An RNA of 177 nucleotides, treated with 2A3 and DMS and read out base by base.
RNA sequence: GGGAACGACUCGAGUAGAGUCGAAAAGACCGGAUCGUAGACUGGAAGGAUGGUCCGCGGCUAAGAUUGUAAAUUGUGAUGCUGUGUCUACUGGUCAAGGGGUGUAUAAUCAUGGUUAUGCUAGUCAUACAUAUGGAACAUUCGUGUUCCAUAUGUAAAAAGAAACAACAACAACAAC
Reactivity to 2A3 in 0.01 (KOAc 150mM, MgCl2 10mM, bicine 150mM(pH8.5), 24C), signal-to-noise 8, nucleotides 027 to 126: g060a020c020c000g010g020a040u050c020g010u040a020g070a150c050u060g070g080a080a020g080g030a060u080g040g040u000c000c010g030c030g010g000c020u040a070a030g040a150u070u180g120u210a070a110a130u110u080g060u060g060a040u100g020c030u010g000u000g010u070c010u040a090c040u060g010g010u020c030a050a050g030g000g000g000u050g020u020a070u040a060a040u070c050a060u090g070g000u050u050a040u080g030c030u040a040g070u070c020a030
Reactivity to DMS in 0.01 (KOAc 150mM, MgCl2 10mM, bicine 150mM(pH8.5), 24C), signal-to-noise 9, nucleotides 027 to 126: g010a130c050c010g010g010a040u000c040g020u000a050g020a090c040u010g010g020a130a090g010g010a170u000g010g010u000c020c020g020c080g010g010c040u000a110a130g010a070u000u010g010u010a060a070a100u000u000g010u000g000a090u010g010c020u000g010u000g010u000c030u000a070c050u010g010g010u000c030a060a080g000g000g000g010u000g010u000a040u000a050a050u010c080a060u000g010g000u000u000a050u000g010c050u000a100g010u010c120a180

Notes: For DMS, 51,253 sequencing reads were counted. For 2A3 the reverse transcriptase was SuperScript II with manganese. Conditions: 150 mM KOAc, 10 mM MgCl2 and 150 mM bicine (pH 8.5), 24 C. The 2A3 profile rests on 15,979 reads.